[RMDB]
RNA sequence: GGGAACGACUCGAGUAGAGUCGAAAAGCACACAUAUCUAUCAACUGUCGUUGAUCAUAUUCGAAUGCGGUUUUGAAUUUUGCUAGGGGGUGAUAAUCCCCGAGAUCCCCGAAUGCACCACGUAUGGACCAUUGGGCAGCUUCCAGGGUUGAUAUAACCUCUCUUUUCAAUUCGUUGAAAAGAGAGGAAAAGAAACAACAACAACAAC
Reactivity to DMS in 0.01 (KOAc 150mM, MgCl2 10mM, bicine 150mM(pH8.5), 24C), signal-to-noise 2, nucleotides 027 to 156: g000c010a080c010a110c110a100u000a090u000c030u000a110u010c020a050a080c040u030g050u010c130g040u000u010g020a090u000c180a110u000a100u000u000c030g000a070a080u000g020c030g040g000u010u000u040u020g000a060a120u000u000u000u010g040c060u000a130g000g020g010g040g020u000g000a120u020a060a090u010c010c000c000c000g000a020g000a100u000c000c000c000c070g050a110a110u000g030c030a000c000c050a050c040g040u000a090u000g010g000a040c030c020a210u020u030g000g010g000c030a100g000c050u000u000c000c020a070g020g000g020u010u000g000a080u000a070u000a080a150
Reactivity to 2A3 in 0.01 (KOAc 150mM, MgCl2 10mM, bicine 150mM(pH8.5), 24C), signal-to-noise 2, nucleotides 027 to 156: g060c020a030c010a010c020a070u060a080u160c050u090a100u110c020a010a040c030u140g090u260c110g020u030u050g040a040u080c030a040u070a090u190u130c020g070a060a040u080g060c020g040g050u050u020u130u050g050a040a050u120u090u040u270g030c040u040a030g000g000g000g000g020u030g030a030u040a180a040u030c000c000c000c000g000a000g010a000u030c020c010c000c020g050a080a040u080g000c000a000c030c000a020c010g080u080a120u080g020g020a020c000c040a050u030u050g000g010g040c050a030g000c010u120u050c020c000a000g100g000g030u000u060g050a010u070a010u070a180a060
Source: RMDB library OK3TST, as collected in RNAgym.
An RNA of 207 nucleotides, treated with DMS and 2A3 and read out base by base.